[RMDB]
RNA sequence: GGGAACGACUCGAGUAGAGUCGAAAAGAGUGCCGUGGACCCGCGGCACCAAGCGCAAGCCGGUGGACGUUGCCCUCUACGCACUGCUGGUGAUGAUGUUGCUGUCGGCGCUGUUCACCGAUGGCGCAACGUCUAAGCUUUUCGAAGCUUAGACGUUAAAAGAAACAACAACAACAAC
Reactivity to DMS in 0.01 (KOAc 150mM, MgCl2 10mM, bicine 150mM(pH8.5), 24C), signal-to-noise 4, nucleotides 027 to 126: g000a140g020u000g000c000c000g030u000g000g010a270c030c040c030g020c000g000g000c000a010c010c170a080a100g010c010g010c030a110a140g040c100c020g000g010u010g000g000a030c020g010u000u000g000c010c000c040u000c050u010a080c190g030c020a060c050u010g000c090u000g010g020u000g010a120u010g010a080u010g010u000u000g030c020u000g010u010c250g000g000c010g010c050u000g000u000u000c030a020c020c020g010a050u010g000g000c000g010c030
Reactivity to 2A3 in 0.01 (KOAc 150mM, MgCl2 10mM, bicine 150mM(pH8.5), 24C), signal-to-noise 3, nucleotides 027 to 126: g090a010g000u000g010c000c000g000u040g050g200a300c000c020c030g000c020g000g000c030a010c000c000a040a030g000c000g000c010a070a050g100c050c000g080g000u010g010g000a010c020g040u120u200g000c000c040c000u030c050u090a030c050g000c030a010c020u110g030c060u090g060g110u130g050a140u110g010a000u090g070u240u100g030c040u050g030u070c020g010g000c020g000c090u090g000u010u010c020a010c010c000g000a010u050g020g000c010g000c020